[RMDB]
RNA sequence: GGGAACGACUCGAGUAGAGUCGAAAAUUAUAACUUAUUCAUUUGUGUGUCAUAAGCACCUAACACAGAGCCUGAUUCAUUAUUGGUUUCAUUGGCCAUUAUAGACUUAAAAAUCUCAAUACUAUGUAAUUACAUGGUUUCUGUGAGAUGGGUUUGAGCUUCAUGUCAAUUUCGAUUGACAUGAAGCAAAAGAAACAACAACAACAAC
Reactivity to 2A3 in 0.01 (KOAc 150mM, MgCl2 10mM, bicine 150mM(pH8.5), 24C), signal-to-noise 2, nucleotides 027 to 156: u150u040a110u020a200a040c030u110u080a020u270u110c050a110u010u220u030g060u000g000u000g020u060c050a070u090a120a000g020c020a020c020c000u030a100a010c020a010c010a000g010a040g000c000c000u040g050a040u090u000c030a010u010u080a030u090u040g070g000u030u120u080c080a020u000u230g040g050c030c000a000u020u010a100u040a160g020a040c040u160u130a020a090a000a040a140u020c070u010c060a030a040u080a170c050u120a010u090g020u040a050a120u070u070a070c020a020u030g000g040u030u300u000c030u040g030u000g050a050g020a000u050g000g010g030u050u030u030g020a020
Reactivity to DMS in 0.01 (KOAc 150mM, MgCl2 10mM, bicine 150mM(pH8.5), 24C), signal-to-noise 1, nucleotides 027 to 156: u000u010a110u030a170a150c090u000u000a140u000u000c040a100u000u010u000g000u000g080u020g000u000c070a120u000a070a170g020c070a050c000c040u000a020a240c020a050c000a020g030a010g060c020c000u000g000a060u000u000c030a020u000u000a080u010u000g020g000u000u000u000c060a300u000u000g020g050c000c010a120u020u010a200u000a150g010a020c000u020u010a050a090a030a030a080u000c010u020c000a000a040u020a050c190u020a040u000g000u000a060a020u000u000a050c040a050u010g000g020u000u000u000c010u000g000u020g020a070g020a060u000g010g000g010u010u000u000g020a190